[RMDB]
RNA sequence: GGGAACGACUCGAGUAGAGUCGAAAAUUUCAGCCCUAGUUCUUGGGAGCAUGGUGGGUAUCUUGAUAAGGUUGAACCAGAAAUUGAUGAAAAUGGCAGUAUGAUUCCAAAAUACAAGAUCUAUACCUGUUACUGACUAGUUCGCUAGUCAGUAACAAAAAGAAACAACAACAACAAC
Reactivity to DMS in 0.01 (KOAc 150mM, MgCl2 10mM, bicine 150mM(pH8.5), 24C), signal-to-noise 4, nucleotides 027 to 126: u010u000u060c070a150g010c010c010c010u000a120g030u010u010c050u000u000g000g000g000a060g000c110a130u030g000g040u000g000g000g010u010a050u010c040u000u000g010a080u010a100a110g000g000u030u000g000a080a110c020c030a110g000a050a070a090u000u020g010a090u020g030a070a080a040a080u000g010g000c060a070g030u040a030u010g000a080u000u010c060c080a020a030a050a100u040a100c090a040a040g010a030u010c030u020a040u020a080c070c070
Reactivity to 2A3 in 0.01 (KOAc 150mM, MgCl2 10mM, bicine 150mM(pH8.5), 24C), signal-to-noise 4, nucleotides 027 to 126: u060u060u060c050a060g000c020c000c000u030a030g040u040u090c020u010u050g010g000g020a100g040c070a080u080g030g010u040g020g000g020u110a050u070c060u020u070g050a060u080a090a060g040g020u060u070g070a060a040c010c010a010g040a030a110a070u150u160g020a080u060g040a070a060a060a030u080g030g000c000a030g040u120a040u220g060a090u120u090c040c020a010a140a040a000u140a060c040a030a050g000a050u000c070u020a090u060a100c030c010